[RMDB]
RNA sequence: GGGAACGACUCGAGUAGAGUCGAAAAGUGCCGGCAAUAUAGUGUGUAUGGAGGUCUCAAUGGCUCGGAAGUGCCAGCAAACCGGCGUAGAUAUUAGCAGACGUAUGGGCGUAAGACUUUUAUUGAAAAAAGUACAUAAGCUUCGGCUUAUGUACAACAAUAGCAUAGGCUUCGGCCUAUGCUAUUGAAAAGAAACAACAACAACAAC
Reactivity to 2A3 in 0.01 (KOAc 150mM, MgCl2 10mM, bicine 150mM(pH8.5), 24C), signal-to-noise 2, nucleotides 027 to 156: g070u020g030c000c010g000g000c110a130a020u120a000u040a180g100u090g020u000g060u120a090u080g070g000a040g000g030u000c020u020c100a060a120u110g000g000c020u020c080g030g030a070a060g030u030g070c030c000a040g000c050a070a020a020c000c000g020g000c010g030u040a020g020a060u100a010u090u220a060g020c020a020g000a040c050g040u070a050u130g030g040g000c020g010u050a070a010g020a020c010u110u050u100u160a210u110u180g050a050a020a140a000a000a000g000u000a000c000a000u000a010a000g000c000u040u060c110g100g020c030u000u000a000u010g000u000a000c000a000a000
Reactivity to DMS in 0.01 (KOAc 150mM, MgCl2 10mM, bicine 150mM(pH8.5), 24C), signal-to-noise 2, nucleotides 027 to 156: g010u000g030c010c040g000g000c050a100a150u000a110u000a080g010u020g000u000g040u000a090u000g030g010a080g020g000u000c000u010c060a100a110u010g010g050c000u000c040g000g030a160a140g030u000g020c020c000a040g000c080a050a120a080c010c030g030g010c050g010u000a070g000a120u000a050u000u000a040g020c050a180g000a030c050g040u010a070u000g020g030g000c010g000u010a080a110g010a080c060u000u010u020u020a140u010u020g000a000a010a020a100a090a150g020u000a000c010a010u000a000a000g000c010u000u000c300g050g000c020u000u000a000u000g000u000a000c050a060a050

Structure probing data (2A3 and DMS) for a 207-nucleotide construct.
It was measured as part of the RMDB library M2RFPK.
The RNA was probed in 150 mM KOAc, 10 mM MgCl2 and 150 mM bicine (pH 8.5) at 24 C.
For 2A3, 861 sequencing reads were counted.
The DMS profile rests on 3,363 reads.
For 2A3 the reverse transcriptase was SuperScript II with manganese.